[RMDB]
RNA sequence: GGGAACGACUCGAGUAGAGUCGAAAAAACUACAGCAGCGAACAACUGGAGGAGGCUUUUGCCGAACACUCUUUCACUCCCUGCAAAAGUCAGGAAUUAUCCCGCUACGGCUGGGUGGCUCCGCACCAUCAUUCAGUAUCUUCGGAUACUGAAUGAUAAAAGAAACAACAACAACAAC
Reactivity to DMS in 0.01 (KOAc 150mM, MgCl2 10mM, bicine 150mM(pH8.5), 24C), signal-to-noise 5, nucleotides 027 to 126: a070a060c050u010a080c090a100g020c040a040g030c070g010a080a050c070a090a100c130u010g000g010a080g010g020a120g010g010c040u010u000u000u010g020c030c070g000a100a070c140a070c060u010c020u000u000u000c080a080c120u000c030c030c000u000g000c050a030a050a060a070g000u000c050a070g010g010a070a050u000u000a080u000c010c000c040g010c050u000a060c140g030g000c020u010g010g000g020u000g010g000c030u000c010c030g030c140a100c110c090
Reactivity to 2A3 in 0.01 (KOAc 150mM, MgCl2 10mM, bicine 150mM(pH8.5), 24C), signal-to-noise 4, nucleotides 027 to 126: a000a000c070u130a050c020a020g000c000a000g020c010g060a040a010c030a060a040c070u090g020g020a040g030g020a030g010g010c020u080u100u190u280g030c020c010g020a090a000c060a010c010u060c000u040u030u000c030a030c050u030c010c030c020u030g000c030a060a070a070a090g050u100c050a010g020g040a010a010u090u020a020u080c020c010c010g000c020u050a030c140g080g000c000u050g020g030g000u010g010g020c010u000c020c000g010c020a030c020c020